[RMDB]
RNA sequence: GGGAACGACUCGAGUAGAGUCGAAAAGAUAUGGACGGAUUUCGAUAAGCUAACCUCGGAAACGAGGUGUAGCUUUUGACGAAAGAAGUCCUAAGUCAAAACGACGCGUUCUUCGGAACGCGUCGAAGGAGAAACGGUAGUUCGCUACCGUUUCUCCAAAAGAAACAACAACAACAAC
Reactivity to DMS in 0.01 (KOAc 150mM, MgCl2 10mM, bicine 150mM(pH8.5), 24C), signal-to-noise 1, nucleotides 027 to 126: g000a020u000a300u020g000g030a010c000g000g030a300u020u000u000c000g020a270u000a000a010g010c000u000a030a010c000c000u000c000g000g000a110a120a150c010g000a020g030g000u000g000u020a020g010c020u000u000u000u000g000a110c140g000a000a010a000g010a300a270g010u000c000c000u000a030a150g020u040c030a140a050a070a180c020g020a000c000g100c020g000u010u000c010u000u010c190g040g000a010a000c000g010c000g020u000c000g000a000a020